This 177-nucleotide RNA was probed chemically with DMS and 2A3.
DMS (dimethyl sulfate) methylates the pairing face of unpaired adenines and cytosines.

RNA sequence: GGGAACGACUCGAGUAGAGUCGAAAAGGCUGGUGUGAGCGGGUGCCGGAAGCGGAUGAGGUGCUGCCUGCGCCGCUGCCGCCGUACCGGGUACUGACCGGGCUGGUGGACCGCUUCGGGCGCACACCCGGUUAGGUAAUUUCGAUUACCUAACCGGAAAAGAAACAACAACAACAAC
Reactivity to DMS in 0.01 (KOAc 150mM, MgCl2 10mM, bicine 150mM(pH8.5), 24C), signal-to-noise 5, nucleotides 027 to 126: g020g010c020u000g000g010u000g010u010g010a100g010c070g020g020g010u000g000c000c000g010g010a040a010g010c010g010g000a200u010g000a110g010g030u000g000c000u010g010c130c100u010g000c040g020c010c000g010c080u000g010c010c010g020c010c000g010u000a090c010c020g000g010g000u020a130c300u010g010a140c010c010g010g000g000c090u010g030g020u000g010g010a300c010c010g000c010u000u000c010g000g010g010c020g000c030a050c080a050c090
Reactivity to 2A3 in 0.01 (KOAc 150mM, MgCl2 10mM, bicine 150mM(pH8.5), 24C), signal-to-noise 4, nucleotides 027 to 126: g060g000c030u040g020g030u020g010u030g030a040g070c120g050g090g090u120g020c020c030g120g000a010a000g010c010g020g040a120u120g080a080g000g020u010g010c020u080g110c020c110u070g000c010g000c000c000g010c050u060g030c000c010g000c000c000g010u050a230c000c000g010g000g000u180a220c150u190g160a130c020c000g000g020g000c080u140g000g000u010g010g010a020c000c000g000c000u020u020c010g080g010g010c020g000c010a020c000a010c000

It was measured as part of the RMDB library OK2TRN. The 2A3 profile rests on 7,003 reads.